[RMDB]
RNA sequence: GGGAACGACUCGAGUAGAGUCGAAAAAAGAUAUGGACCCAGCUCCCCACCUUAUCUAAGCCUUGGAUUUACCGAUCGGAAACGAUCGGUUGUCAGGCUAACGAUAAGAGGCUGGGUCCUAAGUCAACGUGUUACUUCUGUUCGCAGAAGUAACACGAAAAGAAACAACAACAACAAC
Reactivity to DMS in 0.01 (KOAc 150mM, MgCl2 10mM, bicine 150mM(pH8.5), 24C), signal-to-noise 1, nucleotides 027 to 126: a030a080g010a170u000a180u000g000g020a030c000c000c000a000g030c010u000c170c000c020c060a300c080c000u000u000a000u000c000u000a300a110g010c000c000u070u000g040g000a000u000u000u000a000c040c000g010a000u000c030g020g000a160a140a160c000g000a000u000c000g040g000u000u000g000u000c020a020g030g000c000u000a040a100c300g000a060u000a000a010g000a070g040g050c000u040g000g000g000u000c000c000u000a000a160g000u000c220a110a100

Conditions: 150 mM KOAc, 10 mM MgCl2 and 150 mM bicine (pH 8.5), 24 C. This 177-nucleotide RNA was probed chemically with DMS. It was measured as part of the RMDB library TTRDES.